[RMDB]
RNA sequence: GGGAACGACUCGAGUAGAGUCGAAAAUGCUGCAAUGUAUUUCGUAGGCAAAUUGAUGUAAUUUUUCCUAUCCUUCUGUAGGAAAUUCUAGCACAGCAGAAGCGACAAGAAUAGCGGCAAUCGUUACCGGAGGACCCAGUUUCGACUGGGUCCUCCGAAAAGAAACAACAACAACAAC
Reactivity to 2A3 in 0.01 (KOAc 150mM, MgCl2 10mM, bicine 150mM(pH8.5), 24C), signal-to-noise 1, nucleotides 027 to 126: u000g000c070u000g000c000a000a260u110g000u080a110u000u170u000c010g000u030a110g000g150c000a000a050a070u040u170g180a260u190g130u180a190a000u020u140u000u000u070c000c040u070a080u040c000c070u200u040c110u010g040u000a000g190g040a020a010a020u300u140c060u000a140g000c110a000c040a070g000c010a100g000a060a000g000c000g000a060c240a130a070g000a040a150u060a100g050c000g000g000c000a000a000u060c030g150u000u070a070c000
An RNA of 177 nucleotides, treated with 2A3 and read out base by base. The data come from the RNA Mapping Database (RMDB), library OK1LIB. Conditions: 150 mM KOAc, 10 mM MgCl2 and 150 mM bicine (pH 8.5), 24 C.